[RMDB]
RNA sequence: GGGAACGACUCGAGUAGAGUCGAAAACCGCCGGCCUUCGCUUUAGCUGUUUCGGGAAGUUGCCCCGCGUCCGCAAGCUGAAAUCAAAUCGACGCAAGGCGCCAUCCUAGCACGCUUCGGAAGAGCGUUAUAGCCUUAAUUUCGAUUAAGGCUAUAAAAAAGAAACAACAACAACAAC
Reactivity to DMS in 0.01 (KOAc 150mM, MgCl2 10mM, bicine 150mM(pH8.5), 24C), signal-to-noise 9, nucleotides 027 to 126: c030c010g020c110c050g010g010c040c030u010u000c040g010c050u010u010u010a060g010c020u000g010u000u000u010c050g010g000g000a080a120g010u010u010g010c030c010c050c090g010c050g000u000c020c090g020c150a080a090g020c070u010g010a070a080a080u020c140a050a080a100u010c110g010a060c070g010c040a090a100g000g010c030g010c060c050a080u010c010c010u000a070g010c090a070c080g000c010u010u010c040g000g010a060a070g000a040g010c020g010
Reactivity to 2A3 in 0.01 (KOAc 150mM, MgCl2 10mM, bicine 150mM(pH8.5), 24C), signal-to-noise 9, nucleotides 027 to 126: c000c010g020c020c010g050g020c010c010u050u040c030g040c090u080u060u120a020g010c010u020g040u070u070u100c040g010g000g030a050a070g050u130u190g060c010c010c000c020g010c010g010u040c050c020g040c070a050a040g030c050u100g090a080a060a060u130c060a030a060a090u110c050g020a020c020g010c050a040a040g030g000c010g000c010c010a060u070c000c010u010a020g030c020a020c100g010c010u050u050c010g050g030a070a020g020a050g040c000g000
About this RNA
Source: RMDB libraries RFM100 and RFMREP, as collected in RNAgym. The record gives the reactivity of an RNA of 177 nucleotides to DMS and 2A3. The RNA was probed in 150 mM KOAc, 10 mM MgCl2 and 150 mM bicine (pH 8.5) at 24 C. DMS adducts were read by reverse transcription with MarathonRT.